[RMDB]
Chemical mapping of a 177-nucleotide RNA with 2A3 and DMS. For DMS, 1,586 sequencing reads were counted. The RNA was probed in 150 mM KOAc, 10 mM MgCl2 and 150 mM bicine (pH 8.5) at 24 C. The data come from the RNA Mapping Database (RMDB), library TTRDES.
RNA sequence: GGGAACGACUCGAGUAGAGUCGAAAAGAUAUGGAUGUGUGGCUUCGAUAAGCUAUGGGUCGGAAACGACCUGCAUAGCUUUUGACGAAGAGCACAUCCUAAGUCAAAACGCCGCUUCGGCGGCGAAGUCCGUGUAUAUGUUCGCAUAUACACGGACAAAAGAAACAACAACAACAAC
Reactivity to 2A3 in 0.01 (KOAc 150mM, MgCl2 10mM, bicine 150mM(pH8.5), 24C), signal-to-noise 1, nucleotides 027 to 126: g000a020u050a030u180g010g020a010u010g060u020g060u080g300g300c020u010u020c000g080a090u030a170a000g040c000u000a010u030g040g000g000u010c010g000g010a070a100a040c020g010a010c000c010u000g000c000a000u000a000g000c000u000u000u040u160g270a220c090g010a000a010g000a000g030c000a010c000a000u050c000c000u000a010a010g030u000c010a000a050a140a190c020g020c000c020g000c000u080u110c270g130g000c020g060g000c030g030a050a010
Reactivity to DMS in 0.01 (KOAc 150mM, MgCl2 10mM, bicine 150mM(pH8.5), 24C), signal-to-noise 2, nucleotides 027 to 126: g000a050u000a300u000g000g000a000u000g020u000g010u040g030g000c010u000u000c000g030a230u030a020a000g000c000u010a000u010g000g000g000u010c000g030g000a090a080a300c010g030a020c000c010u020g000c030a010u000a000g000c000u000u000u000u000g000a200c190g020a020a010g010a300g000c000a040c000a000u000c000c000u000a020a060g000u000c070a080a050a170a090c040g020c000c000g080c030u000u000c180g030g030c000g030g000c010g010a060a070